[RMDB]
RNA sequence: GGGAACGACUCGAGUAGAGUCGAAAAGGUGCCUGUGUCAUCCUACACACCGAAAGUUGCACAUCCUGAACUUCAAUGUGAGUGUGUUAUGCCUGUGUAUAUUGAACAUUUGAAACAGGCUCCAUAGACCAUUAUAAUAAUAAAUUUCAGACAAGGAUAAUCGUGCAGGAUUCGUCCUGCACGAUUAAAAAGAAACAACAACAACAAC
Reactivity to 2A3 in 0.01 (KOAc 150mM, MgCl2 10mM, bicine 150mM(pH8.5), 24C), signal-to-noise 1, nucleotides 027 to 156: g030g000u000g010c020c000u000g000u010g040u000c010a000u070c000c010u060a010c010a000c020a000c030c020g070a130a000a000g050u080u130g060c020a030c000a050u100c030c030u120g110a200a200c030u250u180c210a180a130u100g100u070g130a080g120u000g000u010g080u080u080a070u160g010c000c050u010g000u000g030u010a040u010a080u300u170g070a090a030c020a060u010u100u130g120a110a110a000c000a000g040g000c000u000c000c000a020u100a010g040a030c000c000a000u050u210a020u120a170a090u080a170a000u050a160a090a080u190u160u110c060a060g030a110c020a020a130g020g000a070
Description
Chemical mapping of a 207-nucleotide RNA with 2A3. The RNA was probed in 150 mM KOAc, 10 mM MgCl2 and 150 mM bicine (pH 8.5) at 24 C. Values are in units of 0.01, from 0 to 300, in steps of 10. For 2A3, 333 sequencing reads were counted.